The record gives the reactivity of an RNA of 177 nucleotides to DMS and 2A3. Values are in units of 0.01, from 0 to 300, in steps of 10. The RNA was probed in 150 mM KOAc, 10 mM MgCl2 and 150 mM bicine (pH 8.5) at 24 C. For 2A3, 21,944 sequencing reads were counted. For DMS, 18,462 sequencing reads were counted. For 2A3 the reverse transcriptase was SuperScript II with manganese.
RNA sequence: GGGAACGACUCGAGUAGAGUCGAAAAGGGGCAUCGGACGACGAGGAGGACGAUGUCAAGCAGCAUGCGAUCAUCGAGGGGUCACAUCACUGCCCAAAUGUCGUGUCGGAUGCCAUGCAGGAAGCAGAUAUGAACAAGUGUUCGCACUUGUUCAUAUAAAAGAAACAACAACAACAAC
Reactivity to DMS in 0.01 (KOAc 150mM, MgCl2 10mM, bicine 150mM(pH8.5), 24C), signal-to-noise 9, nucleotides 027 to 126: g010g020g010g020c010a020u000c010g010g020a130c030g010a100c100g020a100g010g010a150g000g010a050c010g020a020u000g000u000c050a180a130g010c010a020g020c300a020u000g000c030g000a020u000c020a070u010c160g010a130g010g010g010g000u000c020a030c020a010u000c150a070c030u000g000c000c010c020a070a140a050u000g010u000c000g000u000g000u000c010g010g000a030u000g010c010c010a050u000g010c040a120g010g010a080a100g020c100a080g000
Reactivity to 2A3 in 0.01 (KOAc 150mM, MgCl2 10mM, bicine 150mM(pH8.5), 24C), signal-to-noise 9, nucleotides 027 to 126: g060g000g010g000c010a010u030c070g080g030a020c020g030a010c040g030a060g070g050a030g030g010a010c020g040a040u050g030u040c020a000a020g000c010a000g010c010a010u070g010c010g020a030u030c010a030u110c070g100a080g030g100g000g000u030c010a010c000a040u060c030a030c070u030g000c010c000c000a200a300a030u090g010u010c010g000u020g040u060c030g120g010a010u010g000c010c000a000u060g000c020a020g100g060a090a020g010c050a030g030